[RMDB]
RNA sequence: GGGAACGACUCGAGUAGAGUCGAAAAAAUGUCAGCAAUUUUAUCGCCACGUCGAACAACAGAUGAGUGAAGUUGUACUUUUGGCGGUACGUAAAAUCCUCAAUGACUAUGAUCAAGUGGCUAUGACGCUUGAAACUCCUUUCGAGGAGUUUCAAGCAAAAGAAACAACAACAACAAC
Reactivity to DMS in 0.01 (KOAc 150mM, MgCl2 10mM, bicine 150mM(pH8.5), 24C), signal-to-noise 1, nucleotides 027 to 126: a110a030u000g020u000c040a100g000c240a040a060u000u010u000u010a130u010c130g010c000c030a010c110g030u000c170g000a000a000c020a030a140c040a080g050a200u010g030a120g000u020g000a050a060g000u000u010g000u000a040c040u000u000u000u030g010g000c120g000g060u000a030c140g000u000a300a010a030a070u000c000c010u010c000a030a180u000g000a040c080u010a030u020g000a130u000c020a110a090g010u000g000g000c010u000a060u000g000a060c220
Reactivity to 2A3 in 0.01 (KOAc 150mM, MgCl2 10mM, bicine 150mM(pH8.5), 24C), signal-to-noise 1, nucleotides 027 to 126: a000a000u200g020u040c060a000g010c000a110a100u000u120u060u020a060u080c070g000c040c000a000c020g080u090c060g050a020a030c020a000a030c010a010g130a260u130g000a080g080u270g020a020a000g010u190u210g010u040a030c000u070u080u090u030g110g100c060g000g040u000a030c000g090u140a020a000a000a020u000c000c000u000c000a000a040u050g030a010c060u110a130u110g060a140u000c010a030a030g010u000g000g010c000u010a030u030g000a040c080
The data come from the RNA Mapping Database (RMDB), library OK2TRN. An RNA of 177 nucleotides, treated with DMS and 2A3 and read out base by base. For 2A3, 960 sequencing reads were counted. The RNA was probed in 150 mM KOAc, 10 mM MgCl2 and 150 mM bicine (pH 8.5) at 24 C. For DMS the reverse transcriptase was MarathonRT. 2A3 adducts were read by reverse transcription with SuperScript II with manganese.